[RMDB]
RNA sequence: GGGAACGACUCGAGUAGAGUCGAAAAGAGAUUGCGCCGCUGGCAGAGUUUCUCACGAUACUCGUAUCCAUACGUGCAGUCGCGUUCUAUAGGAUAGUCGCCAGGAUGGCGAGUAGUGAGGUAGCUAUCGUUGCAGAAAAUUCGUUUUCUGCAACGAAAAAGAAACAACAACAACAAC
Reactivity to 2A3 in 0.01 (KOAc 150mM, MgCl2 10mM, bicine 150mM(pH8.5), 24C), signal-to-noise 3, nucleotides 027 to 126: g060a010g030a030u020u080g060c020g020c030c030g020c060u030g020g000c070a020g000a000g060u020u070u040c020u000c020a010c050g050a010u040a080c010u000c020g030u030a050u000c020c010a040u060a150c050g060u090g030c050a070g080u140c050g030c000g040u100u020c080u090a160u090a120g130g040a050u040a050g090u060c030g000c000c020a030g120g070a130u110g030g040c010g000a000g000u010a000g010u000g040a050g000g100u060a000g000c000u010a030
Reactivity to DMS in 0.01 (KOAc 150mM, MgCl2 10mM, bicine 150mM(pH8.5), 24C), signal-to-noise 6, nucleotides 027 to 126: g000a090g010a090u000u000g000c030g010c020c040g010c160u010g010g020c180a160g010a040g020u010u000u000c010u010c150a090c170g020a130u000a020c000u000c010g010u010a070u000c010c020a100u000a140c260g000u000g010c070a070g010u000c050g010c070g010u000u000c060u000a100u010a090g010g020a300u000a040g000u000c050g010c010c040a120g010g010a100u000g010g030c000g000a020g000u000a030g000u010g010a040g010g010u010a050g010c060u000a100
Background
This 177-nucleotide RNA was probed chemically with 2A3 and DMS. DMS (dimethyl sulfate) methylates the pairing face of unpaired adenines and cytosines. Values cover nucleotides 27 to 126. It was measured as part of the RMDB library OK2TST. 2A3 adducts were read by reverse transcription with SuperScript II with manganese. The reactions ran in a buffer of 150 mM KOAc, 10 mM MgCl2 and 150 mM bicine (pH 8.5), at 24 C. For 2A3, 3,012 sequencing reads were counted.